[RMDB]
The record gives the reactivity of an RNA of 177 nucleotides to DMS. The reactions ran in a buffer of 150 mM KOAc, 10 mM MgCl2 and 150 mM bicine (pH 8.5), at 24 C. Source: RMDB library M2PK90, as collected in RNAgym.

RNA sequence: GGGAACGACUCGAGUAGAGUCGAAAAGUGUCGGACUCGCAAGUGCGAAAAUAUUUUAUCCCUAAACAGGGAGUGGAAAGCACGUCCUGGAGUGGAAAACACGUCCAUCCCAAAGCGAGAAAUGAAAUCCAGAUCCAAGUUUCGACUUGGAUCUGGAAAAAGAAACAACAACAACAAC
Reactivity to DMS in 0.01 (KOAc 150mM, MgCl2 10mM, bicine 150mM(pH8.5), 24C), signal-to-noise 1, nucleotides 027 to 126: g000u020g040u000c010g030g030a200c000u000c030g050c040a180a030g020u000g000c000g040a110a110a090a130u000a070u020u020u000u000a070u070c000c000c000u000a050a070a100c250a040g000g000g010a000g000u000g030g030a070a100a210g000c000a000c000g000u000c050c050u000g000g010a100g050u000g010g000a120a110a170a030c090a040c210g000u040c010c000a000u010c020c000c000a040a080a080g000c000g010a000g000a070a100a100u000g000a020a120a210